The record gives the reactivity of an RNA of 177 nucleotides to DMS and 2A3.
For DMS the reverse transcriptase was MarathonRT.
The reactions ran in a buffer of 150 mM KOAc, 10 mM MgCl2 and 150 mM bicine (pH 8.5), at 24 C.
For DMS, 8,652 sequencing reads were counted.
[RMDB]
RNA sequence: GGGAACGACUCGAGUAGAGUCGAAAAGAUAUGGAAUAUCCUAGGUGCGAUGAGCUUAAUCGGAAACGAUUAAGCGAGCACACUAGGAGUAUUCCUAAGUCAAAAGGAAGGCCUUCGGGCCUUCCAACAUAAGGCAUAGCUUCGGCUAUGCCUUAUGAAAAGAAACAACAACAACAAC
Reactivity to DMS in 0.01 (KOAc 150mM, MgCl2 10mM, bicine 150mM(pH8.5), 24C), signal-to-noise 6, nucleotides 027 to 126: g010a060u010a300u010g010g010a020a000u000a030u000c000c000u000a010g010g010u000g010c000g000a160u020g010a300g010c000u000u010a000a010u000c000g000g000a160a090a180c010g020a020u000u000a000a000g010c000g000a120g000c010a010c010a090c000u000a000g010g010a020g020u000a010u000u000c010c000u010a080a150g000u000c050a080a100a210a140g010g010a010a000g020g020c000c000u000u010c290g050g010g020c000c000u000u000c010c000a080a120
Reactivity to 2A3 in 0.01 (KOAc 150mM, MgCl2 10mM, bicine 150mM(pH8.5), 24C), signal-to-noise 3, nucleotides 027 to 126: g020a020u080a040u190g000g000a010a000u010a020u010c000c000u020a010g010g000u020g020c030g150a300u150g050a060g030c000u000u010a000a010u010c010g040g050a120a060a070c010g000a010u000u000a000a000g000c000g000a000g010c010a010c050a110c000u000a000g010g000a010g010u010a010u000u000c000c000u010a130a040g080u040c050a050a060a080a140g010g020a030a000g020g000c010c040u120u170c300g200g020g000c020c040u000u010c020c000a000a000